[RMDB]
RNA sequence: GGGAACGACUCGAGUAGAGUCGAAAAACGGGUGAGUAACACGUGGGCAACCUGCCUGUAAGUUGGGGAUAACUCCGGGAAACCGGGGCUAAUACCGAAUGAUAAAGUGUGGCGCAUGCCACGCUUUUGAAAGAUGGUUUCGGCUAUCGCUUACAGACUAAAAUAGCUGGUUCGCCAGCUAUUUUAGAAAAGAAACAACAACAACAAC
Reactivity to DMS in 0.01 (KOAc 150mM, MgCl2 10mM, bicine 150mM(pH8.5), 24C), signal-to-noise 2, nucleotides 027 to 156: a040c050g010g000g010u000g000a160g020u000a110a050c040a040c060g010u000g000g000g030c090a100a140c030c030u000g020c000c010u000g000u000a020a050g010u000u010g010g000g000g000a110u000a060a050c010u000c010c000g020g010g020a110a090a220c000c020g030g000g030g030c000u000a120a100u000a050c000c000g000a030a030u000g020a150u020a030a040a020g020u010g040u000g010g000c000g020c230a160u010g000c000c000a030c000g000c010u000u000u000u000g000a040a020a070g030a040u000g020g020u000u000u000c210g030g030c010u010a080u000c020g000c000u000u000a030c030a060g000a240
Reactivity to 2A3 in 0.01 (KOAc 150mM, MgCl2 10mM, bicine 150mM(pH8.5), 24C), signal-to-noise 3, nucleotides 027 to 156: a010c040g020g000g020u050g030a150g100u210a100a010c020a010c090g060u100g010g040g000c030a070a070c010c030u040g050c010c000u010g000u000a000a000g010u010u020g030g010g000g000a000u000a010a010c000u000c000c000g010g000g000a040a060a010c000c000g000g010g000g000c000u010a010a000u020a050c000c030g100a010a010u010g030a030u030a070a010a000g000u000g010u000g010g000c080g000c200a130u300g000c000c000a000c000g010c000u000u000u010u010g030a000a010a000g010a000u010g000g020u050u060u080c170g090g000c010u010a000u010c000g000c000u000u000a000c000a010g010a000
An RNA of 207 nucleotides, treated with DMS and 2A3 and read out base by base. Reactivities are given for positions 27 through 156. 2A3 adducts were read by reverse transcription with SuperScript II with manganese. As a SHAPE reagent, 2A3 marks flexible, mostly unpaired nucleotides at the ribose 2'-OH.